[RMDB]
RNA sequence: GGGAACGACUCGAGUAGAGUCGAAAAUUUGUAGUUGAAGUACUUCAUCAUCUGCACGACCUUCUCCGCUGGCAUGUCGGCGGAGAUCGCACAUACCUUCCUUUCCAGCAACGGAAUCACUGUGAGGAAGGUGUCCAGGUCGGCGUCCAGGUCGGCGGAUUUUGCAACCAUUCGUGGUUGCAAAAUCAAAAGAAACAACAACAACAAC
Reactivity to DMS in 0.01 (KOAc 150mM, MgCl2 10mM, bicine 150mM(pH8.5), 24C), signal-to-noise 1, nucleotides 027 to 156: u000u010u100g070u010a000g090u000u000g000a010a170g000u000a170c090u000u030c000a160u000c000a100u010c040u010g000c030a120c000g030a140c010c010u000u000c000u000c000c030g170c000u000g000g000c070a070u010g000u000c110g010g000c000g000g000a140g000a000u000c120g020c070a170c130a040u000a040c060c000u000u000c000c030u000u000u000c300c070a200g020c040a070a300c160g010g000a010a220u000c120a090c030u000g010u000g000a060g010g000a000a000g000g000u000g000u000c100c080a030g010g070u000c130g040g000c020g000u000c040c030a120g000g010u010c000g010g130c000g000
Reactivity to 2A3 in 0.01 (KOAc 150mM, MgCl2 10mM, bicine 150mM(pH8.5), 24C), signal-to-noise 1, nucleotides 027 to 156: u060u070u150g040u000a030g000u010u010g010a080a030g020u020a110c010u040u050c080a140u040c000a010u020c040u010g030c040a060c260g000a070c010c000u030u000c000u000c000c000g010c020u020g040g090c180a250u220g130u300c000g000g000c010g010g000a000g000a020u050c020g030c000a040c000a060u040a020c000c000u000u000c010c000u030u050u000c030c030a010g010c050a070a080c070g160g100a180a090u190c020a000c010u010g070u090g030a000g000g000a000a000g000g010u000g000u020c060c000a040g000g150u070c020g060g020c040g000u000c040c010a010g020g000u000c020g010g030c010g010
Source information: Structure probing data (DMS and 2A3) for a 207-nucleotide construct. For DMS, 869 sequencing reads were counted. Values cover nucleotides 27 to 156. Reactivities are rounded to 0.1 and cut off at 0 and 3. The data come from the RNA Mapping Database (RMDB), library OK3TST.